[RMDB]
RNA sequence: GGGAACGACUCGAGUAGAGUCGAAAACUAUGAAUGUGAAUGUGCGGGAAGAGGACAUAGCGAAGAUUGAAGAGUAUGUGUCUGAGCUGGUUAGGGUUAUCGAUACUGCGGUGAAGAUUGAGAAUGGGUAGUGGUUUCCGUUCGCGGAAACCACUACAAAAGAAACAACAACAACAAC
Reactivity to 2A3 in 0.01 (KOAc 150mM, MgCl2 10mM, bicine 150mM(pH8.5), 24C), signal-to-noise 1, nucleotides 027 to 126: c120u080a070u290g100a070a070u050g030u000g020a040a000u000g030u030g050c120g000g080g000a000a150g000a000g000g000a120c000a050u300a000g100c000g070a000a000g020a000u090u090g050a000a000g000a070g220u240a300u300g100u000g000u000c000u000g000a050g000c120u000g000g000u000u170a030g060g060g030u010u220a070u050c000g080a080u080a240c000u000g050c000g000g000u000g000a050a100g140a250u120u170g000a000g020a050a000u080g020g020